Structure probing data (DMS and 2A3) for a 177-nucleotide construct.

RNA sequence: GGGAACGACUCGAGUAGAGUCGAAAAGAUAUGGAUACCCGUAUGAACUACGGUAUCACUUCGGAAACGAAGUGUAAGCCGCAUACGAACAUCCUAAGUCAAAGCUAUCGGCUUCGGCCGAUAGCAAGCUAUGUGAACCGUUCGCGGUUCACAUAGCAAAAGAAACAACAACAACAAC
Reactivity to DMS in 0.01 (KOAc 150mM, MgCl2 10mM, bicine 150mM(pH8.5), 24C), signal-to-noise 1, nucleotides 027 to 126: g020a040u000a300u000g000g000a030u000a110c200c080c010g030u000a000u000g020a040a060c140u000a300c020g000g000u000a130u000c000a000c000u020u000c000g020g000a070a030a110c000g000a030a000g010u000g000u000a020a300g000c000c000g030c010a000u000a000c000g010a030a210c050a000u000c000c000u000a080a160g000u010c030a070a090a120g000c000u000a000u000c000g010g030c000u000u010c160g020g030c020c010g000a000u000a000g000c000a010a050
Reactivity to 2A3 in 0.01 (KOAc 150mM, MgCl2 10mM, bicine 150mM(pH8.5), 24C), signal-to-noise 2, nucleotides 027 to 126: g010a020u030a000u140g010g020a020u040a060c080c090c020g000u020a000u050g050a160a150c140u170a110c300g030g050u020a030u100c000a000c010u000u000c010g020g040a040a030a000c010g000a020a000g020u000g000u030a210a070g000c000c000g070c060a030u010a010c000g030a060a000c050a040u000c020c000u040a090a010g010u090c030a100a040a060g010c000u000a000u010c020g020g030c020u040u100c250g280g000c020c000g000a000u010a000g040c000a000a000
The RNA was probed in 150 mM KOAc, 10 mM MgCl2 and 150 mM bicine (pH 8.5) at 24 C.